[RMDB]
RNA sequence: GGGAACGACUCGAGUAGAGUCGAAAAGUUUCUCUUAGUCGUUGCAUCGGGUGCUGUUGCCUUAAGCAUGUGUAUAUGGGGUUCGGGGGCUGUUGCCAUGAUAUAUAUGGAUGAGACAGAAGUGGCCCGAAUAUUCUAAAUUCGUUUAGAAUAUUCGAAAAGAAACAACAACAACAAC
Reactivity to 2A3 in 0.01 (KOAc 150mM, MgCl2 10mM, bicine 150mM(pH8.5), 24C), signal-to-noise 6, nucleotides 027 to 126: g010u010u050u000c010u000c000u030u100a070g010u050c040g020u020u060g040c010a050u040c040g040g010g000u050g030c050u080g040u120u080g030c000c000u060u070a060a030g030c020a060u070g050u020g050u070a050u020a090u290g050g000g000g000u050u060c040g010g000g000g010g000c020u020g020u020u030g020c000c000a020u020g110a010u060a030u040a000u010a020u150g030g010a040u050g040a030g000a020c030a020g030a080a020g060u040g050g010c000c000
Reactivity to DMS in 0.01 (KOAc 150mM, MgCl2 10mM, bicine 150mM(pH8.5), 24C), signal-to-noise 9, nucleotides 027 to 126: g010u010u010u000c010u000c040u010u010a090g010u010c030g000u000u000g010c050a070u010c070g010g010g020u010g010c040u010g010u010u000g010c030c040u010u010a090a140g010c060a050u010g020u010g010u010a080u020a080u010g010g000g010g010u000u010c070g000g000g000g010g010c030u000g010u010u000g010c010c020a020u000g010a090u020a110u020a090u020a050u000g000g000a130u010g020a150g000a050c040a050g000a090a080g010u000g010g010c030c070
Structure probing data (2A3 and DMS) for a 177-nucleotide construct.
Conditions: 150 mM KOAc, 10 mM MgCl2 and 150 mM bicine (pH 8.5), 24 C.
The data come from the RNA Mapping Database (RMDB), libraries RFM100 and RFMREP.
For 2A3 the reverse transcriptase was SuperScript II with manganese.